[RMDB]
RNA sequence: GGGAACGACUCGAGUAGAGUCGAAAAAAGGGCUCCCUGUUGGCUCAGGAAGUUCUUGGCACCCAUGUCGCAACUAAUGAAAUUACACGUGUGCAAUAUGGUAGGGAGCAAGGCAUGACGGUAGUGGGCUUCACAAGAGUUUCGACUCUUGUGAAGCAAAAGAAACAACAACAACAAC
Reactivity to 2A3 in 0.01 (KOAc 150mM, MgCl2 10mM, bicine 150mM(pH8.5), 24C), signal-to-noise 3, nucleotides 027 to 126: a000a000g030g020g020c010u020c000c010c010u020g050u090u110g110g060c110u020c080a010g010g000a020a020g030u030u020c000u000u030g060g000c000a050c010c020c010a020u090g090u050c060g010c060a110a080c060u130a100a110u200g150a080a110a070u170u110a060c020a000c080g050u060g010u010g050c020a010a090u100a040u210g020g040u070a060g020g010g020a050g020c020a030a020g030g000c040a030u040g030a040c000g030g010u020a030g020u070g040g100
Reactivity to DMS in 0.01 (KOAc 150mM, MgCl2 10mM, bicine 150mM(pH8.5), 24C), signal-to-noise 2, nucleotides 027 to 126: a040a030g000g000g000c010u000c020c010c000u000g010u010u000g020g010c090u000c020a020g010g010a050a030g020u000u000c010u010u000g000g030c160a170c110c020c030a070u020g020u000c080g040c040a060a050c060u010a090a110u010g000a070a090a100u000u000a020c110a060c160g020u010g000u010g000c020a110a060u000a050u000g000g010u010a080g000g010g010a110g000c030a040a060g000g030c040a040u000g020a110c050g000g010u000a060g050u000g010g000
Source: RMDB library OK2TRN, as collected in RNAgym. The record gives the reactivity of an RNA of 177 nucleotides to 2A3 and DMS. Values cover nucleotides 27 to 126. 2A3 adducts were read by reverse transcription with SuperScript II with manganese. The reactions ran in a buffer of 150 mM KOAc, 10 mM MgCl2 and 150 mM bicine (pH 8.5), at 24 C.